This 177-nucleotide RNA was probed chemically with 2A3 and DMS.
The DMS profile rests on 54,574 reads.
The data come from the RNA Mapping Database (RMDB), library M2PK50.
RNA sequence: GGGAACGACUCGAGUAGAGUCGAAAAUACGCGAGGUUCGCCUCGCGUAAAAGAGGAGCGUAAACGUGAGCGUUCGUAGUGCUGUACAUCGUUCCUACACGAAUGCACAUGGUUUCGACCAUGUGAAGUGUAGGAACUGGUUCGCCAGUUCCUACACAAAAGAAACAACAACAACAAC
Reactivity to 2A3 in 0.01 (KOAc 150mM, MgCl2 10mM, bicine 150mM(pH8.5), 24C), signal-to-noise 9, nucleotides 027 to 126: u040a000c000g000c000g000a000g020g030u060u100c180g070c060c000u000c000g000c000g000u000a000a000a000a010g130a020g050g020a020g010c020g040u150a080a090a120c090g060u080g090a050g020c010g010u050u040c060g040u130a080g040u030g060c030u050g050u130a020c010a070u030c020g010u000u010c000c000u030a020c050a000c030g140a120a050u210g010c000a000c000a010u000g000g040u040u080u140c220g070a020c000c000a000u000g000u010g010a070a030
Reactivity to DMS in 0.01 (KOAc 150mM, MgCl2 10mM, bicine 150mM(pH8.5), 24C), signal-to-noise 9, nucleotides 027 to 126: u000a010c000g020c000g010a020g010g020u000u010c240g020c010c000u000c000g010c000g010u000a000a020a080a130g010a100g010g010a040g010c020g010u010a050a060a100c170g000u000g000a140g010c020g010u000u000c090g010u000a080g010u000g010c020u000g000u000a080c150a110u000c020g000u000u000c000c000u000a050c070a040c090g000a060a070u000g000c000a050c000a010u000g000g000u000u000u010c180g010a030c000c000a010u000g010u000g000a030a070
DMS adducts were read by reverse transcription with MarathonRT.
The RNA was probed in 150 mM KOAc, 10 mM MgCl2 and 150 mM bicine (pH 8.5) at 24 C.